[RMDB]
RNA sequence: GGGAACGACUCGAGUAGAGUCGAAAAGAUAUGGAAGGUCUCAUGGAGAUCUCUGGUCGGAAACGACCAGGAUCUAUGAAGUGAGGACCUUCCUAAGUCAAAACCUCAGUGGUUCGCCACUGAGGAAGGACAUAUAGCGGUUCGCCGCUAUAUGUCCAAAAGAAACAACAACAACAAC
Reactivity to DMS in 0.01 (KOAc 150mM, MgCl2 10mM, bicine 150mM(pH8.5), 24C), signal-to-noise 1, nucleotides 027 to 126: g010a010u000a300u010g000g080a040a030g000g010u000c000u000c000a020u000g000g020a030g020a020u000c000u090c010u020g040g000u010c010g000g000a100a110a160c000g010a040c020c000a040g000g020a000u000c000u000a300u000g020a190a300g010u000g000a040g000g000a040c000c000u000u000c010c000u000a000a130g020u000c030a100a080a110a080c000c000u020c000a000g020u000g020g010u030u040c260g000c000c000a010c000u000g020a010g000g040a000a030
Reactivity to 2A3 in 0.01 (KOAc 150mM, MgCl2 10mM, bicine 150mM(pH8.5), 24C), signal-to-noise 1, nucleotides 027 to 126: g020a000u060a020u140g000g000a020a020g060g000u020c000u000c050a000u040g080g090a060g000a060u020c240u000c000u300g000g000u020c000g000g060a090a050a020c020g020a010c000c010a000g000g010a010u000c000u030a300u090g090a070a060g000u010g010a130g010g070a000c000c010u000u000c000c000u000a010a000g010u010c020a000a010a120a300c020c010u000c010a000g000u010g050g040u060u080c270g050c080c000a000c000u010g010a000g000g000a000a020